The record gives the reactivity of an RNA of 177 nucleotides to 2A3 and DMS. DMS adducts were read by reverse transcription with MarathonRT. The DMS profile rests on 15,885 reads. Reactivities are rounded to 0.1 and cut off at 0 and 3.
[RMDB]
RNA sequence: GGGAACGACUCGAGUAGAGUCGAAAAUCUGCUGUGCUCUUUUCAGCAAGGGUUACUGUUCGACCCGGUUCAAGGACACUAUUCAACCUCUCAAGGACGCUAUCCUCAGCAAGGGAGAUUUCGUCCAGAUCUAACCAAUUUUCGAAUUGGUUAGAUCAAAAGAAACAACAACAACAAC
Reactivity to 2A3 in 0.01 (KOAc 150mM, MgCl2 10mM, bicine 150mM(pH8.5), 24C), signal-to-noise 9, nucleotides 027 to 126: u030c020u050g020c030u040g020u030g050c020u020c010u070u090u070u090c040a040g020c070a100a100g050g000g000u040u080a090c060u090g080u160u110c080g020a070c010c010c000g060g010u060u070c050a040a020g030g010a020c020a020c060u070a110u100u120c050a080a090c020c020u070c020u040c080a070a090g010g000a000c010g000c010u020a020u050c010c010u040c020a080g070c100a190a190g040g020g000a190g010a030u030u070u030c010g000u000c000c000a020
Reactivity to DMS in 0.01 (KOAc 150mM, MgCl2 10mM, bicine 150mM(pH8.5), 24C), signal-to-noise 6, nucleotides 027 to 126: u040c050u010g000c030u000g000u000g010c060u010c030u000u010u010u010c070a060g020c080a090a100g000g000g000u000u000a070c100u010g000u020u010c070g000a050c020c010c000g000g020u010u010c120a080a080g000g010a040c050a060c070u010a080u000u010c070a110a120c090c010u000c060u010c080a120a090g010g000a030c060g000c140u000a070u000c030c000u010c070a120g010c230a090a120g000g000g000a050g000a100u000u010u000c020g010u000c010c040a120